[RMDB]
RNA sequence: GGGAACGACUCGAGUAGAGUCGAAAAUUCAUUUCAAUGAAUUGAAACAAAUUUAAUACAAGUGGAUGUAGGAUAACCGUCCGUCCUUUACAUUGGUAUAAAAGUGAUCUAAAAUUCUAUUUAUAAUUGCGCUCUCGCGUGUUCGCACGCGAGAGAAACAUCACCAUCGAUUCGUCGAUGGUGAUGUAAAAGAAACAACAACAACAAC
Reactivity to 2A3 in 0.01 (KOAc 150mM, MgCl2 10mM, bicine 150mM(pH8.5), 24C), signal-to-noise 1, nucleotides 027 to 156: u010u020c000a000u050u260u180c090a110a060u020g000a000a010u000u050g020a010a010a010c050a040a120a060u120u160u260a180a090u270a020c020a000a170g010u070g020g000a020u150g050u290a030g060g020a070u070a000a140c060c090g000u000c000c000g060u020c020c000u060u190u050a030c050a070u040u130g000g010u120a090u090a180a040a080a100g150u080g020a090u010c090u090a100a000a100a130u070u070c050u030a160u100u130u080a300u140a230a150u020u250g070c040g000c030u000c000u000c000g000c000g000u020g030u070u070c150g000c200a000c000g000c050g020a020g000a000g000a000a000